[RMDB]
RNA sequence: GGGAACGACUCGAGUAGAGUCGAAAACUGAGGGGAGCCCGAGGAGGUCUCUUUUUCCGCCUUUUCUCCUUGCGAUCUUCCUGCUGCCGAAUCCGCAUCAGUUGCACGCGUCGGCGCUGCCGGCUGAAGGUAAAUAGGUGUUCGCACCUAUUUACCUAAAAGAAACAACAACAACAAC
Reactivity to 2A3 in 0.01 (KOAc 150mM, MgCl2 10mM, bicine 150mM(pH8.5), 24C), signal-to-noise 2, nucleotides 027 to 126: c000u000g020a030g000g030g030g060a040g010c040c050c050g020a040g070g070a020g000g030u030c040u050c000u280u060u030u100u000c010c010g030c010c030u060u100u070u040c010u000c010c000u030u030g040c020g100a110u030c010u060u030c040c000u040g030c050u060g000c010c010g060a040a040u000c040c020g030c060a080u060c030a060g080u120u090g000c020a030c070g020c010g040u050c020g110g000c180g040c230u120g040c000c010g030g010c030u070g080a080
Reactivity to DMS in 0.01 (KOAc 150mM, MgCl2 10mM, bicine 150mM(pH8.5), 24C), signal-to-noise 3, nucleotides 027 to 126: c050u010g010a110g000g000g000g000a060g010c260c090c040g000a060g010g010a060g000g000u010c050u010c020u000u000u000u000u010c050c050g020c040c040u020u000u000u000c040u000c020c010u000u000g020c100g010a070u000c030u000u000c020c010u010g020c080u000g010c020c030g000a090a070u000c050c060g010c050a120u010c060a050g000u000u010g020c030a100c100g020c110g010u000c090g020g010c030g040c110u000g000c030c030g010g000c020u000g000a130